[RMDB]
RNA sequence: GGGAACGACUCGAGUAGAGUCGAAAAUAAAGAGUUUCAGAACCUUGGAACUUGUGUGCAAGAUUUGAAUGUCUUGAAGCAGUACGAGGCACUCCAGUAUGUUCACCACCAGUCGAAAAAUGAAAUGUCUUCGCUUUUGAUUCGUCAAAAGCGAAGAAAAAGAAACAACAACAACAAC
Reactivity to DMS in 0.01 (KOAc 150mM, MgCl2 10mM, bicine 150mM(pH8.5), 24C), signal-to-noise 1, nucleotides 027 to 126: u020a070a120a100g000a070g000u010u000u000c100a150g010a210a110c170c090u040u000g010g010a070a000c010u000u010g110u020g000u000g020c000a020a050g010a030u000u030u010g030a130a150u060g000u000c000u000u000g000a270a260g000c010a020g010u000a040c060g010a080g000g010c090a060c120u000c000c200a040g020u020a050u000g000u000u020c060a060c050c030a030c100c070a110g000u060c040g000a000a030a050a040a030u000g020a030a020a030u060g060
Reactivity to 2A3 in 0.01 (KOAc 150mM, MgCl2 10mM, bicine 150mM(pH8.5), 24C), signal-to-noise 2, nucleotides 027 to 126: u220a000a100a000g160a020g000u070u110u070c060a080g020a110a060c010c030u020u030g000g030a050a000c000u170u130g010u010g000u040g200c030a050a000g000a060u120u030u100g120a160a090u300g010u000c000u000u060g000a070a000g000c040a000g040u040a020c050g010a040g100g000c050a000c120u000c030c000a000g030u010a110u110g050u170u070c010a000c070c010a000c000c040a000g030u070c030g210a110a080a000a000a050u160g000a060a160a140u070g090
This 177-nucleotide RNA was probed chemically with DMS and 2A3. For 2A3 the reverse transcriptase was SuperScript II with manganese. For 2A3, 862 sequencing reads were counted. Source: RMDB library OK1LIB, as collected in RNAgym.